[RMDB]
RNA sequence: GGGAACGACUCGAGUAGAGUCGAAAAGCACCGUAUGUGCGGGACGACAUGGAGGUGCGUGAUCGGUGUGCGUAGGUGUUAUCCCUACGGUGUUAGACACUGGAUCUCUGACAGCCUGAAGGGAUGACCGCGGGACUAGCUUCGGCUGGUUUCGCGGAAAAGAAACAACAACAACAAC
Reactivity to DMS in 0.01 (KOAc 150mM, MgCl2 10mM, bicine 150mM(pH8.5), 24C), signal-to-noise 9, nucleotides 027 to 126: g010c020a040c010c060g010u030a060u020g010u010g010c060g010g010g010a130c060g000a070c040a040u010g000g010a240g010g010u000g000c040g010u010g010a040u010c020g000g010u010g010u000g010c030g000u000a030g010g000u010g020u020u030a080u020c090c000c000u000a110c120g000g010u010g010u020u020a080g000a060c090a060c060u020g000g000a060u020c070u010c020u010g000a060c060a050g010c020c000u010g010a140a090g000g000g000a040u010g000a200
Reactivity to 2A3 in 0.01 (KOAc 150mM, MgCl2 10mM, bicine 150mM(pH8.5), 24C), signal-to-noise 9, nucleotides 027 to 126: g010c010a020c020c010g110u130a050u120g060u060g060c020g020g030g040a040c050g010a010c010a050u070g050g050a070g040g040u050g020c030g010u020g020a070u040c020g000g020u030g000u030g100c020g010u020a030g000g030u050g070u210u140a050u060c010c000c000u010a010c030g000g010u050g040u040u080a040g010a010c030a020c100u080g180g050a080u030c020u000c010u050g030a030c020a060g190c010c010u060g040a080a090g020g000g000a020u030g040a030
This 177-nucleotide RNA was probed chemically with DMS and 2A3. The RNA was probed in 150 mM KOAc, 10 mM MgCl2 and 150 mM bicine (pH 8.5) at 24 C. DMS adducts were read by reverse transcription with MarathonRT.